[RMDB]
RNA sequence: GGGAACGACUCGAGUAGAGUCGAAAAGAUAUGGAUGACGUGGAGAAGGCUCCUACCCACCUCGGAAACGAGAGGGAGUACUUCGAUGAAACGUCAUCCUAAGUCAAAAGUACCGUUCGCGGUACAACCUUCCAAGUGUGUUCGCACACUUGGAAGGAAAAGAAACAACAACAACAAC
Reactivity to DMS in 0.01 (KOAc 150mM, MgCl2 10mM, bicine 150mM(pH8.5), 24C), signal-to-noise 1, nucleotides 027 to 126: g000a040u000a150u000g000g010a010u000g000a020c010g000u010g000g020a080g020a000a030g020g010c000u000c000c010u000a050c150c180c070a290c300c030u000c000g010g020a070a030a090c000g000a020g020a180g000g000g000a020g010u000a080c060u010u020c060g010a170u030g030a100a200a060c010g000u000c000a010u000c000c000u000a000a050g020u000c110a100a080a100a100g000u000a000c000c020g020u010u000c190g030c020g010g000u000a000c010a030a050
Reactivity to 2A3 in 0.01 (KOAc 150mM, MgCl2 10mM, bicine 150mM(pH8.5), 24C), signal-to-noise 2, nucleotides 027 to 126: g080a030u140a140u270g010g000a000u000g000a010c010g020u000g000g040a040g000a010a000g000g020c000u000c020c000u060a150c100c050c020a120c030c000u000c010g020g060a060a070a040c020g000a030g000a160g050g000g000a040g000u070a300c010u020u000c000g250a300u030g020a000a000a000c000g010u010c010a000u020c000c010u000a000a000g030u000c050a070a070a000a180g010u010a010c030c010g040u060u120c300g000c010g130g040u010a000c010a000a020
The data come from the RNA Mapping Database (RMDB), library TTRDEL. The record gives the reactivity of an RNA of 177 nucleotides to DMS and 2A3. The reactions ran in a buffer of 150 mM KOAc, 10 mM MgCl2 and 150 mM bicine (pH 8.5), at 24 C. For 2A3, 2,258 sequencing reads were counted. DMS adducts were read by reverse transcription with MarathonRT. 2A3 adducts were read by reverse transcription with SuperScript II with manganese.